This 177-nucleotide RNA was probed chemically with 2A3 and DMS. For 2A3 the reverse transcriptase was SuperScript II with manganese.
RNA sequence: GGGAACGACUCGAGUAGAGUCGAAAAGGUCGUCUUUUCGAAGACGACCACUGUCGUUCCCAAAUCUUUUCGAAACAUGUCGAAAGACAUGCUGAAACAGAAUUGGUGUGUGUUUCGACACACACAACAAAGCAGGUUUUUUCGAAAACCUGCUUUGAAAAGAAACAACAACAACAAC
Reactivity to 2A3 in 0.01 (KOAc 150mM, MgCl2 10mM, bicine 150mM(pH8.5), 24C), signal-to-noise 3, nucleotides 027 to 126: g000g000u000c000g000u010c030u000u030u050u150c220g090a010a010g000a000c000g000a000c010c000a000c000u020g000u000c000g000u010u000c010c000c010a010a010a000u000c000u010u050u000u030c010g050a130a000a010c010a000u010g020u020c010g040a080a010a030g010a010c010a010u000g000c030u060g030a040a030a040c120a080g140a150a180u230u270g080g000u010g010u000g000u010g000u050u050u090c180g070a010c000a000c000a000c000a000c000a000a010
Reactivity to DMS in 0.01 (KOAc 150mM, MgCl2 10mM, bicine 150mM(pH8.5), 24C), signal-to-noise 3, nucleotides 027 to 126: g000g000u000c000g010u000c000u000u000u000u030c140g020a020a010g010a010c000g000a010c000c000a000c070u000g010u000c020g010u010u000c000c000c000a090a110a060u000c020u000u010u000u000c020g000a190a120a130c000a010u000g010u000c000g010a130a120a160g000a000c000a000u000g000c050u000g010a070a040a060c230a040g000a050a110u000u000g020g020u000g010u000g010u000g000u010u000u010c180g000a030c010a000c000a010c000a000c020a050a140
The DMS profile rests on 2,994 reads. The data come from the RNA Mapping Database (RMDB), library M2PK50. Conditions: 150 mM KOAc, 10 mM MgCl2 and 150 mM bicine (pH 8.5), 24 C.